[RMDB]
The data come from the RNA Mapping Database (RMDB), library OK2TRN.
Structure probing data (DMS and 2A3) for a 177-nucleotide construct.
The reactions ran in a buffer of 150 mM KOAc, 10 mM MgCl2 and 150 mM bicine (pH 8.5), at 24 C.
For DMS the reverse transcriptase was MarathonRT.
RNA sequence: GGGAACGACUCGAGUAGAGUCGAAAACAAGCUAAAUCGUAAAGUGUCAUUUUUAGGAAGAUCACUUGAAAGUUCAUUUAAUAUUGCUCGUAAAAUGGGGUAUUUCGACAUUCCUAAAGAUUUGCUACGUGUCUACUGUUUUCGAACAGUAGACACGAAAAGAAACAACAACAACAAC
Reactivity to DMS in 0.01 (KOAc 150mM, MgCl2 10mM, bicine 150mM(pH8.5), 24C), signal-to-noise 2, nucleotides 027 to 126: c050a120a140g020c090u020a050a030a010u030c080g010u000a070a080a040g020u000g000u030c160a060u000u000u000u010u000a090g000g010a030a030g030a130u000c080a050c070u000u000g010a100a060a080g000u000u010c030a050u010u000u010a080a080u010a080u000u020g000c060u000c090g000u020a030a050a050a040u030g020g010g000g010u000a100u000u000u010c060g040a100c110a170u000u000c010c020u010a020a070a150g000a070u000u020u010g040c040u000a110
Reactivity to 2A3 in 0.01 (KOAc 150mM, MgCl2 10mM, bicine 150mM(pH8.5), 24C), signal-to-noise 3, nucleotides 027 to 126: c030a030a000g020c020u110a040a120a120u100c020g120u100a090a050a140g060u060g090u120c060a060u020u000u010u040u060a030g030g020a050a010g010a120u100c040a020c100u030u000g040a090a060a020g080u050u040c010a000u110u090u070a120a100u110a070u170u160g070c040u050c090g060u060a010a030a020a060u100g010g000g030g030u070a190u030u050u020c040g000a010c030a070u040u000c000c020u020a050a040a020g020a040u100u060u160g000c030u040a050